Chemical mapping of a 177-nucleotide RNA with DMS and 2A3. Reactivities are given for positions 27 through 126. For 2A3 the reverse transcriptase was SuperScript II with manganese. For 2A3, 2,042 sequencing reads were counted. Source: RMDB library RFMREP, as collected in RNAgym. The DMS profile rests on 1,881 reads. In probing experiments dimethyl sulfate is read out at A N1 and C N3, which are open when not base-paired. The reactions ran in a buffer of 150 mM KOAc, 10 mM MgCl2 and 150 mM bicine (pH 8.5), at 24 C. DMS adducts were read by reverse transcription with MarathonRT.

RNA sequence: GGGAACGACUCGAGUAGAGUCGAAAAUUGAAAUAAUAAAAGGUUCGAGCAGGUUAACAAGCAUUAAUACUAAAUGUGUUUCAUCGUCUACUUAUUGCUAAACAAAUUGAUUGUUCAUCAAAUUUGCCUAUUCAAGACAGUUCGCUGUCUUGAAUAGAAAAGAAACAACAACAACAAC
Reactivity to DMS in 0.01 (KOAc 150mM, MgCl2 10mM, bicine 150mM(pH8.5), 24C), signal-to-noise 3, nucleotides 027 to 126: u010u010g010a110a060a060u010a110a080u010a060a100a080a070g000g010u000u000c100g020a040g000c040a080g000g000u010u020a030a040c090a060a130g030c060a030u000u010a060a070u010a090c160u000a040a080a050u010g010u000g000u010u000u020c120a070u000c110g010u010c040u000a030c070u000u010a040u010u010g000c070u000a060a020a080c060a010a040a060u000u000g000a040u000u010g000u010u000c080a100u000c040a030a030a080u010u000u000g000c200
Reactivity to 2A3 in 0.01 (KOAc 150mM, MgCl2 10mM, bicine 150mM(pH8.5), 24C), signal-to-noise 2, nucleotides 027 to 126: u040u050g020a020a000a040u110a050a050u060a050a090a040a020g080g000u040u100c060g020a020g000c010a030g020g030u030u060a060a060c030a100a000g010c000a010u040u120a070a060u080a140c020u140a070a070a070u120g030u010g020u030u080u010c020a060u050c000g030u000c020u010a060c020u060u050a050u080u110g030c040u040a070a020a020c010a020a030a100u020u010g020a040u020u050g100u190u110c040a030u000c010a030a140a100u020u010u020g000c000